Record summary:
Structure probing data (DMS and 2A3) for a 207-nucleotide construct. DMS (dimethyl sulfate) methylates the pairing face of unpaired adenines and cytosines. Conditions: 150 mM KOAc, 10 mM MgCl2 and 150 mM bicine (pH 8.5), 24 C. The data come from the RNA Mapping Database (RMDB), library RNAMAK. 2A3 adducts were read by reverse transcription with SuperScript II with manganese.

RNA sequence: GGGAACGACUCGAGUAGAGUCGAAAAGGAGCUUUCGAGCUCCCUCCUCUCCUAAGUCAGCGACGAUCUGUUUAGGCGGAAUGCUACCCACCUCGGAAACGAGAGGCAUUGCCAUAAACAGGGAGCUGAUAUGGAUAAUUCCGACCUUCGGGUCGAAGAUCUCUUCUACAUUCGUGUAGAAGAGAUCAAAAGAAACAACAACAACAAC
Reactivity to DMS in 0.01 (KOAc 150mM, MgCl2 10mM, bicine 150mM(pH8.5), 24C), signal-to-noise 2, nucleotides 027 to 156: g000g000a030g050c030u000u010u010c220g020a070g020c000u000c000c020c010u000c040c030u010c150u020c010c000u010a040a240g010u000c030a070g020c060g010a120c130g000a070u010c010u040g000u000u010u010a000g010g030c130g060g000a050a030u000g040c020u000a000c090c000c040a240c140c000u010c010g010g000a200a090a290c010g000a040g010a300g000g000c020a030u000u000g000c000c000a090u000a020a030a010c030a030g000g010g010a060g040c000u010g000a030u000a110u010g040g020a090u000a040a190u010u000c100c000g000a040c000c000u000u010c260g040g030g010u010c000g010a010a140
Reactivity to 2A3 in 0.01 (KOAc 150mM, MgCl2 10mM, bicine 150mM(pH8.5), 24C), signal-to-noise 6, nucleotides 027 to 156: g010g000a010g000c070u120u180u220c300g130a010g000c000u020c000c000c000u030c010c010u090c040u020c010c000u080a190a080g020u010c010a010g000c000g150a230c000g000a270u000c010u000g010u000u010u000a020g010g000c020g070g300a070a010u000g000c000u060a110c050c060c070a080c030c000u000c010g000g040a100a100a100c020g010a010g000a020g010g000c000a000u010u060g030c000c020a220u030a010a000a000c000a010g000g000g000a000g000c000u000g000a000u010a020u030g000g000a010u060a150a160u300u120c110c020g000a010c000c000u070u120c270g100g000g000u000c010g000a030a030